[RMDB]
RNA sequence: GGGAACGACUCGAGUAGAGUCGAAAAUCUAUCGAUGCCGAGUAACCGGAUCCUCAGCCAUGACGGAGUGCAGGCUGCUACCUAAUCCAGUGAGGUCUCCACCGCGCUUGAACGAGAUCAUGGAUCCCUCUGUCAUACAAUUCGUUGUAUGACAGAGAAAAGAAACAACAACAACAAC
Reactivity to DMS in 0.01 (KOAc 150mM, MgCl2 10mM, bicine 150mM(pH8.5), 24C), signal-to-noise 9, nucleotides 027 to 126: u010c050u010a080u010c050g000a060u000g020c020c020g010a120g020u000a110a120c110c030g000g000a090u010c030c030u000c080a090g010c050c030a050u000g000a070c050g010g010a120g010u000g010c050a050g000g010c040u010g010c080u000a050c050c040u000a090a100u000c060c060a080g010u000g010a090g010g000u000c040u000c040c050a060c060c050g020c060g010c050u000u010g010a070a120c110g010a140g010a070u000c030a090u010g010g010a100u010c050c070
Reactivity to 2A3 in 0.01 (KOAc 150mM, MgCl2 10mM, bicine 150mM(pH8.5), 24C), signal-to-noise 9, nucleotides 027 to 126: u040c020u040a120u090c020g050a030u080g050c010c010g020a020g060u040a060a080c040c030g010g040a120u030c010c010u050c030a030g010c020c010a130u060g020a030c060g100g080a100g020u170g030c020a020g040g000c020u020g000c020u050a060c000c010u060a070a050u040c030c010a060g030u040g150a040g040g030u000c020u000c010c010a040c010c020g030c000g010c030u030u050g010a060a020c050g020a040g020a160u040c020a050u060g030g020a070u030c030c000